An RNA of 207 nucleotides, treated with DMS and 2A3 and read out base by base. The data come from the RNA Mapping Database (RMDB), library OK3TST. 2A3 adducts were read by reverse transcription with SuperScript II with manganese. The DMS profile rests on 4,117 reads.
RNA sequence: GGGAACGACUCGAGUAGAGUCGAAAAGGGAGGAGAAACCCAGUAGUUGGUGUAUCAUGUUGGGGCAGGGGCCCCUGGCUGCUUGAAAUCUCCAUUCACACCAAGUCUGCAUGAACAUAACAUUAAAUGGCAAAUUUAAAGUACCAUGACAGGUUGAUAAUGGAUAUUUAUUCGUAAAUAUCCAUUAAAAAGAAACAACAACAACAAC
Reactivity to DMS in 0.01 (KOAc 150mM, MgCl2 10mM, bicine 150mM(pH8.5), 24C), signal-to-noise 2, nucleotides 027 to 156: g000g020g020a090g000g020a120g010a130a100a150c060c010c050a150g040u010a160g000u000u000g000g020u010g010u010a100u020c050a080u010g010u010u010g020g000g030g010c030a160g010g040g030g010c040c000c010c010u000g010g030c020u010g000c050u000u000g000a060a050a070u000c010u000c020c020a160u000u010c070a060c040a050c050c010a030a130g000u000c020u030g000c050a110u000g000a070a070c050a080u020a060a060c080a110u000u000a000a070a070u000g000g010c040a030a060a080u010u000u000a050a090a150g010u000a030c020c000a030u030g020a120c060a070g020g030u000u000g010a180
Reactivity to 2A3 in 0.01 (KOAc 150mM, MgCl2 10mM, bicine 150mM(pH8.5), 24C), signal-to-noise 3, nucleotides 027 to 156: g010g020g020a060g020g020a010g010a030a050a030c020c010c000a020g030u060a010g000u020u070g010g050u080g030u110a130u130c090a080u160g070u060u080g030g020g010g000c030a060g040g080g180g020c010c000c000c000u000g010g000c030u040g010c010u040u040g030a030a050a080u060c020u010c010c010a040u070u080c050a030c020a030c030c010a010a040g040u030c010u020g060c030a030u040g040a070a020c040a060u130a120a030c020a050u100u090a070a220a070u130g060g000c030a010a080a130u040u060u070a070a090a030g020u030a050c000c040a010u040g080a050c010a060g070g050u040u070g030a010